[RMDB]
RNA sequence: GGGAACGACUCGAGUAGAGUCGAAAAUCUGGGGUUCGCCCCAGAAAAAAAGCGUACUACUUUGAGGUAUUGGUAGGUGCGAUCCCAAAUAGGAUCGACACCUAUAAUCAAUACUCCCCACCAAAGUAUCGCAAAAACACGAUGUUCGCAUCGUGAAUCAUACCAACGAGUUCGCUCGUUGGUAUGAAAAAGAAACAACAACAACAAC
Reactivity to DMS in 0.01 (KOAc 150mM, MgCl2 10mM, bicine 150mM(pH8.5), 24C), signal-to-noise 1, nucleotides 027 to 156: u000c000u020g000g020g060g040u040u010c160g050c020c010c000c020a000g000a010a000a060a040a040a070a120g050c000g010u000a100c090u000a050c060u020u000u000g000a300g000g000u000a000u000u000g000g050u000a000g000g100u000g020c040g000a050u000c000c010c000a060a210a300u010a060g030g010a010u000c010g040a260c050a000c000c000u020a000u010a020a010u000c040a000a000u000a010c060u000c220c040c070c090a300c120c000a030a020a110g000u000a000u020c010g040c020a040a060a040a110a200c010a060c000g000a000u000g030u000u000c270g040c030a000u000c000g030u000g000a050a120
Reactivity to 2A3 in 0.01 (KOAc 150mM, MgCl2 10mM, bicine 150mM(pH8.5), 24C), signal-to-noise 2, nucleotides 027 to 156: u030c010u030g000g000g000g030u040u050c200g140c000c030c000c090a050g000a020a000a000a000a000a000a000g020c010g040u080a050c020u000a010c000u000u000u040g010a050g000g010u010a000u000u030g000g000u000a010g000g020u000g010c000g000a000u020c040c010c000a300a300a070u230a150g010g000a010u000c010g200a140c020a000c000c000u000a020u030a000a000u010c000a000a000u000a010c020u120c090c020c010c000a020c040c000a000a000a000g000u000a000u300c050g020c040a000a000a000a140a110c030a000c010g010a000u020g010u140u070c280g010c140a000u000c000g000u000g030a010a050